[RMDB]
RNA sequence: GGGAACGACUCGAGUAGAGUCGAAAAUAUUCAGGGUUUGAGAUAUUGGCGUAAUCUUGCAACCAGCUUCUGAGCCAAGAGGGUCAUGAAUUUUCUGGCAGAAGGUUAAACGACUGAAUACUGCAUUUUCUGAUCAUUCAAUUUCUAGAACCUAUGACAAAAUGAUACCCUUCGGGGUAUCAUUUUGAAAAGAAACAACAACAACAAC
Reactivity to 2A3 in 0.01 (KOAc 150mM, MgCl2 10mM, bicine 150mM(pH8.5), 24C), signal-to-noise 2, nucleotides 027 to 156: u200a050u060u100c030a000g000g040g000u040u020u010g050a020g000a010u050a020u060u040g050g010c040g020u090a090a080u040c070u040u060g020c010a050a060c030c000a030g030c060u130u060c030u060g030a010g080c060c010a060a020g050a040g030g040g000u000c020a080u140g090a110a030u160u050u120u110c060u070g000g000c010a030g030a090a010g050g010u070u090a120a300a040c040g040a010c020u050g030a070a010u090a160c010u010g010c020a040u030u010u000u120c030u030g080a070u050c020a010u020u170c030a060a080u070u060u000c010u020a040g050a060a040c000c000u040a250u050g010a020
Reactivity to DMS in 0.01 (KOAc 150mM, MgCl2 10mM, bicine 150mM(pH8.5), 24C), signal-to-noise 1, nucleotides 027 to 156: u000a110u000u000c020a160g000g010g060u010u010u010g000a140g000a110u000a060u000u000g010g030c050g030u000a080a120u010c000u020u010g050c020a140a080c030c020a090g010c210u000u030c060u000g000a140g000c020c040a080a110g010a150g000g000g020u000c010a110u010g000a070a040u010u000u010u010c050u010g040g000c000a130g010a020a100g010g010u010u030a010a080a070c110g030a050c030u000g000a040a110u000a090c040u000g000c030a270u000u000u010u000c050u010g010a120u000c030a090u000u010c040a080a070u000u000u000c020u000a270g020a030a080c040c010u000a060u000g000a230